[RMDB]
This 207-nucleotide RNA was probed chemically with 2A3 and DMS. Reactivities are given for positions 27 through 156. The reactions ran in a buffer of 150 mM KOAc, 10 mM MgCl2 and 150 mM bicine (pH 8.5), at 24 C. The DMS profile rests on 4,160 reads.

RNA sequence: GGGAACGACUCGAGUAGAGUCGAAAAACAGGUUUGGUGCUAUUAGUGCUUCUUUACAAGAAAUUCUAACUCGGCUUGAGGCUGUAGAAGCAAAAGCCCAGAUAGAUCGUCUUAUUAAUGGCAGGUUAACUGCACUUAAUGCGUAUAUAUCCAAGCAGGAUAUUAUUCAGUUCGCUGAAUAAUAUCCAAAAGAAACAACAACAACAAC
Reactivity to 2A3 in 0.01 (KOAc 150mM, MgCl2 10mM, bicine 150mM(pH8.5), 24C), signal-to-noise 3, nucleotides 027 to 156: a000c030a000g060g000u030u040u040g010g020u040g020c040u030a040u090u070a080g030u010g040c000u080u050c030u030u130u080a060c050a050a040g050a070a150a070u110u010c010u020a010a060c000u000c010g010g030c000u020u030g030a080g260g000c000u010g030u140a090g070a300a010g000c000a070a000a000a000g000c000c000c000a010g000a010u020a000g020a020u020c030g040u000c060u110u110a130u060u100a070a030u070g060g000c020a010g030g040u080u120a110a080c030u030g000c000a010c000u040u110a060a030u050g010c000g090u010a040u010a020u010a020u200c020c020a010a020g010c020a050
Reactivity to DMS in 0.01 (KOAc 150mM, MgCl2 10mM, bicine 150mM(pH8.5), 24C), signal-to-noise 2, nucleotides 027 to 156: a130c030a100g010g000u000u000u010g010g000u010g030c010u010a070u000u000a070g010u000g000c020u010u000c020u000u000u000a120c040a090a140g010a100a120a120u000u000c050u000a010a100c050u000c060g020g040c040u000u010g020a300g020g010c000u000g010u010a140g020a150a090g000c040a080a180a060a070g040c000c000c040a030g040a110u000a020g000a030u000c070g010u000c120u000u000a070u050u010a020a030u000g000g010c030a020g000g000u010u000a100a130c020u000g000c030a040c020u000u000a010a070u000g010c080g000u010a080u000a140u000a060u010c050c030a050a100g000c040a170